[RMDB]
An RNA of 177 nucleotides, treated with DMS and read out base by base. Values cover nucleotides 27 to 126. The reactions ran in a buffer of 150 mM KOAc, 10 mM MgCl2 and 150 mM bicine (pH 8.5), at 24 C. The DMS profile rests on 831 reads. Source: RMDB library OK2TST, as collected in RNAgym.
RNA sequence: GGGAACGACUCGAGUAGAGUCGAAAAACUGGCAACAACAAGGCGUCCGCGUGCGAAUGGUUGUGCGACAAUCGAUCGGGUAGCGUUAUUGAACUGCGUGAAGGCUUGGCGCCCGAUUCGCCCAUCCAGCUAAAACAGCGUUCGCGCUGUUUUAGCUAAAAGAAACAACAACAACAAC
Reactivity to DMS in 0.01 (KOAc 150mM, MgCl2 10mM, bicine 150mM(pH8.5), 24C), signal-to-noise 1, nucleotides 027 to 126: a110c090u020g000g020c030a080a050c050a110a050c080a120a170g000g050c010g010u000c040c060g040c110g020u000g010c030g000a100a060u000g010g000u010u010g030u000g000c100g030a070c150a040a060u010c120g000a010u000c010g010g000g030u000a010g000c010g010u000u000a260u010u000g000a060a140c090u000g000c060g010u000g000a120a110g000g010c030u000u010g040g010c060g000c000c000c010g020a090u020u020c050g000c000c010c010a030u040c110c130